[RMDB]
Structure probing data (2A3 and DMS) for a 177-nucleotide construct.

RNA sequence: GGGAACGACUCGAGUAGAGUCGAAAAGUCUCACGAGUGCAAAGACAAAGGUAGUUGACUCCGGAGCUACCAGUACUCGAAGGAAUGCGAAAGAGUUCAAGUAUUCCAACCGGAGAAGAACUCAAAAAUGACUCCAGUCAUUCGUGACUGGAGUCAUAAAAGAAACAACAACAACAAC
Reactivity to 2A3 in 0.01 (KOAc 150mM, MgCl2 10mM, bicine 150mM(pH8.5), 24C), signal-to-noise 2, nucleotides 027 to 126: g050u000c000u000c040a020c000g000a000g000u080g060c050a300a030a130g120a110c050a080a140a000g030g000u000a000g000u000u000g080a010c000u000c000c020g000g000a000g000c000u000a000c000c000a000g020u000a000c000u010c000g000a070a000g100g020a080a000u130g060c020g110a220a290a030g060a000g000u090u000c040a110a010g120u010a190u130u050c030c050a030a070c010c000g000g000a000g000a000a000g080a000a000c020u000c090a020a020a020a020
Reactivity to DMS in 0.01 (KOAc 150mM, MgCl2 10mM, bicine 150mM(pH8.5), 24C), signal-to-noise 2, nucleotides 027 to 126: g000u000c000u000c060a290c130g000a010g030u000g030c000a060a070a260g010a130c300a050a150a090g000g000u000a000g000u000u010g000a070c070u000c010c020g020g000a060g000c000u000a000c000c000a120g000u000a000c000u000c000g020a180a270g000g000a030a160u020g000c040g100a030a050a040g020a030g000u000u000c000a090a160g000u050a040u090u010c040c160a050a240c010c000g010g000a030g010a030a080g010a010a000c090u010c010a020a050a050a030

Record summary: The DMS profile rests on 1,552 reads. For DMS the reverse transcriptase was MarathonRT. The 2A3 profile rests on 1,285 reads.